[RMDB]
The record gives the reactivity of an RNA of 177 nucleotides to DMS and 2A3.
Conditions: 150 mM KOAc, 10 mM MgCl2 and 150 mM bicine (pH 8.5), 24 C.
For 2A3, 11,034 sequencing reads were counted.
It was measured as part of the RMDB library TTRDES.
RNA sequence: GGGAACGACUCGAGUAGAGUCGAAAAGAUAUGGACCCACCUAGCUGAAUCACUCGGAAACGAGUGAAUUCAGCGAGCUAGUGGGUCCUAAGUCAAACCGUAGUUCUAGGUUCGCCUAGAACUACGGCUACCAUGCAUUCUUCGGAAUGCAUGGUAGAAAAGAAACAACAACAACAAC
Reactivity to DMS in 0.01 (KOAc 150mM, MgCl2 10mM, bicine 150mM(pH8.5), 24C), signal-to-noise 4, nucleotides 027 to 126: g000a040u010a300u010g000g020a010c000c000c010a000c100c040u000a150g010c000u000g020a030a010u000c000a010c000u000c010g010g000a120a080a230c000g020a010g010u000g000a050a040u000u000c010a020g020c040g010a030g010c300u010a060g020u000g000g000g010u000c000c010u010a010a090g000u000c040a100a110a300c000c000g000u000a000g000u000u000c000u000a010g010g020u000u010c290g030c000c000u000a000g000a010a000c000u000a000c000g010g000
Reactivity to 2A3 in 0.01 (KOAc 150mM, MgCl2 10mM, bicine 150mM(pH8.5), 24C), signal-to-noise 2, nucleotides 027 to 126: g040a010u110a040u150g000g000a010c000c000c000a010c000c030u020a030g000c010u020g010a020a010u000c010a020c000u010c010g030g040a070a070a060c010g020a010g000u010g000a000a010u010u000c000a000g030c010g000a010g030c150u240a020g010u000g020g000g000u000c000c000u000a000a010g010u000c010a060a050a040c000c010g000u000a000g010u010u010c000u000a010g070g000u050u080c300g140c050c000u000a010g010a000a000c000u000a000c000g000g000